[RMDB]
RNA sequence: GGGAACGACUCGAGUAGAGUCGAAAAUCACUUCAGAGGGGAUCGUACACGGGACUCCUUGUCGCGAGCUUGCCGAGAUCGACAUACUUCCCAACACCGGUGGGCAACUUCACCCCUUCGCUACGUCCCCACUGGGUACCUUCGGGUACCCAGUGGGAAAAGAAACAACAACAACAAC
Reactivity to 2A3 in 0.01 (KOAc 150mM, MgCl2 10mM, bicine 150mM(pH8.5), 24C), signal-to-noise 2, nucleotides 027 to 126: u020c000a030c030u130u050c100a040g000a020g050g010g000g000a050u030c060g080u050a040c120a020c090g040g000g090a070c120u070c060c100u050u110g040u030c070g010c050g150a010g030c000u020u020g060c050c000g120a080g060a240u070c020g020a000c000a000u100a110c010u110u070c000c000c040a000a010c060a060c000c020g070g020u040g000g010g000c040a140a050c050u090u030c010a080c000c000c000c000u090u170c000g000c060u070a090c040g060u060c000
Conditions: 150 mM KOAc, 10 mM MgCl2 and 150 mM bicine (pH 8.5), 24 C. Structure probing data (2A3) for a 177-nucleotide construct. 2A3 adducts were read by reverse transcription with SuperScript II with manganese. The data come from the RNA Mapping Database (RMDB), library OK1LIB.